The record gives the reactivity of an RNA of 177 nucleotides to DMS and 2A3. DMS (dimethyl sulfate) methylates the pairing face of unpaired adenines and cytosines. The data come from the RNA Mapping Database (RMDB), library OK1LIB. DMS adducts were read by reverse transcription with MarathonRT. The reactions ran in a buffer of 150 mM KOAc, 10 mM MgCl2 and 150 mM bicine (pH 8.5), at 24 C. The 2A3 profile rests on 1,973 reads. For 2A3 the reverse transcriptase was SuperScript II with manganese.

[RMDB]
RNA sequence: GGGAACGACUCGAGUAGAGUCGAAAACGUCGCCGCCUCCGGGCGACUUAGAUGCUCCUGAAUUACUUUCUUCUGAUCUUGGACAAUCUCUUGUGAAUCCUUCUGUAGAAAUUACCCCCGAAACCCCGAAAGAAAGGGAGUUCGCUCCCUUUCUUUCAAAAGAAACAACAACAACAAC
Reactivity to DMS in 0.01 (KOAc 150mM, MgCl2 10mM, bicine 150mM(pH8.5), 24C), signal-to-noise 2, nucleotides 027 to 126: c150g000u000c040g020c010c020g000c040c010u000c040c020g000g010g030c010g010a000c000u010u040a050g030a060u020g020c020u040c030c010u000g040a100a080u040u000a110c050u010u000u010c020u020u000c010u000g010a100u050c060u000u020g010g010a070c060a090a050u020c040u010c040u000u020g020u020g020a060a110u010c020c010u000u000c010u000g020u030a100g000a070a100a060u030u010a130c000c000c000c010c010g020a090a040a100c000c010c020c100
Reactivity to 2A3 in 0.01 (KOAc 150mM, MgCl2 10mM, bicine 150mM(pH8.5), 24C), signal-to-noise 3, nucleotides 027 to 126: c030g010u000c000g000c000c000g020c020c000u050c030c020g050g000g000c000g010a000c000u000u030a070g010a030u090g020c000u020c030c000u020g070a090a090u150u030a120c060u070u050u080c000u040u030c010u020g050a120u030c020u090u080g050g000a030c010a070a060u010c040u020c020u120u180g060u040g120a060a050u050c000c000u020u040c040u060g040u050a010g050a000a060a070u090u090a130c010c000c010c010c000g000a020a030a050c030c020c010c020